[RMDB]
RNA sequence: GGGAACGACUCGAGUAGAGUCGAAAACACACUCUCUGCAGUCCCAUGGCACGUGGUGGAGACACAGAAGGGGAGACUGAGACCCUGAGGGUUCCUCAGUGAGGCAGGGGAAGAGCUCUGAACACCUGCCCAUACCUGGCACGGGACAAGGCAUCACAGGAGUUGUAUUGUUCGCAAUACAACUCCUAAAAGAAACAACAACAACAAC
Reactivity to 2A3 in 0.01 (KOAc 150mM, MgCl2 10mM, bicine 150mM(pH8.5), 24C), signal-to-noise 1, nucleotides 027 to 156: c050a000c000a040c040u030c010u020c020u090g020c070a100g000u020c050c010c000a050u030g040g040c030a110c240g050u120g050g000u000g010g120a080g010a000c110a000c030a100g060a060a110g070g000g010g000a040g010a050c010u010g000a000g030a070c010c000c050u100g070a290g050g010g000u110u120c050c010u030c030a000g000u030g060a150g070g000c010a010g000g000g000g000a050a040g030a010g020c030u050c030u100g090a130a040c040a070c040c000u000g010c070c000c030a060u120a070c000c000u020g010g000c060a010c030g040g000g010a000c080a000a010g020g000c020a080u130c060a070c070